[RMDB]
Structure probing data (2A3 and DMS) for a 177-nucleotide construct. Source: RMDB library OK2TRN, as collected in RNAgym. For DMS the reverse transcriptase was MarathonRT. For 2A3 the reverse transcriptase was SuperScript II with manganese. The RNA was probed in 150 mM KOAc, 10 mM MgCl2 and 150 mM bicine (pH 8.5) at 24 C.
RNA sequence: GGGAACGACUCGAGUAGAGUCGAAAAAGGACACAUUGGUGAUAGUGCUGAGACAUUAUACAAUGCGUUAGAAUUAGAAGAUACAUUAGGUACUAAAUUAGAAAAAGUAUAUGUAUACGCGCACCUACUGUGUAACACCAUUCGUGGUGUUACACAGAAAAGAAACAACAACAACAAC
Reactivity to 2A3 in 0.01 (KOAc 150mM, MgCl2 10mM, bicine 150mM(pH8.5), 24C), signal-to-noise 3, nucleotides 027 to 126: a020g160g010a010c020a000c000a020u020u060g070g020u170g090a020u010a010g040u030g000c070u110g090a060g050a210c000a020u030u030a010u010a020c010a010a030u010g000c010g020u020u030a050g080a070a040u130u090a050g070a220a020g000a040u010a030c000a010u120u120a110g000g160u040a010c010u060a030a290a260u160u160a090g120a040a170a000a000a000g010u010a020u010a000u100g000u000a010u030a030c040g030c020g000c020a060c000c030u070a120
Reactivity to DMS in 0.01 (KOAc 150mM, MgCl2 10mM, bicine 150mM(pH8.5), 24C), signal-to-noise 2, nucleotides 027 to 126: a090g000g000a030c020a030c010a010u010u000g020g020u020g000a010u000a010g040u010g000c000u010g000a210g050a150c010a010u030u010a010u000a020c030a030a010u010g000c030g000u000u000a130g010a070a100u000u000a120g010a050a100g000a070u000a010c020a010u000u010a060g020g010u000a020c020u000a050a070a070u030u010a170g000a090a080a020a070a060g020u000a020u000a040u010g010u000a020u000a070c060g000c110g010c170a090c020c020u010a100